An RNA of 177 nucleotides, treated with 2A3 and DMS and read out base by base. DMS adducts were read by reverse transcription with MarathonRT. For 2A3, 10,668 sequencing reads were counted. Conditions: 150 mM KOAc, 10 mM MgCl2 and 150 mM bicine (pH 8.5), 24 C. The data come from the RNA Mapping Database (RMDB), library OK1LIB.

[RMDB]
RNA sequence: GGGAACGACUCGAGUAGAGUCGAAAAUAUACAUCAGAAGUCGGCACAACUCCCGACUCGCGGUGAGCGAUGCAGCGUAGCGCGAGCUACGCAGCUGCUGUGCGGAUGGCUAGCGCGUGCUAGCCUACGCACUAUGACGUUUCGACGUCAUAGUGCGAAAAGAAACAACAACAACAAC
Reactivity to 2A3 in 0.01 (KOAc 150mM, MgCl2 10mM, bicine 150mM(pH8.5), 24C), signal-to-noise 9, nucleotides 027 to 126: u140a000u020a030c040a060u070c020a050g090a160a010g100u010c010g000g070c140a030c040a290a300c130u060c010c000c000g010a010c000u000c000g010c050g030g040u100g040a020g010c030g090a120u170g010c030a020g000c010g000u020a000g000c010g010c040g050a040g010c000u000a000c000g000c000a000g000c000u030g000c010u030g030u070g050c030g090g050a100u130g020g000c000u000a000g000c070g030c080g230u300g010c010u000a000g000c000c000u000a010
Reactivity to DMS in 0.01 (KOAc 150mM, MgCl2 10mM, bicine 150mM(pH8.5), 24C), signal-to-noise 7, nucleotides 027 to 126: u050a120u030a130c050a030u000c040a060g010a150a030g010u000c000g000g030c230a140c110a110a160c300u020c110c000c000g010a050c040u000c030g000c300g000g030u000g000a080g010c050g020a060u030g020c000a030g020c000g010u000a000g000c010g010c300g000a170g010c010u000a000c010g020c000a010g030c020u010g000c040u000g000u010g000c050g020g020a080u020g010g000c000u000a000g010c010g010c300g020u030g010c000u000a000g010c010c000u010a010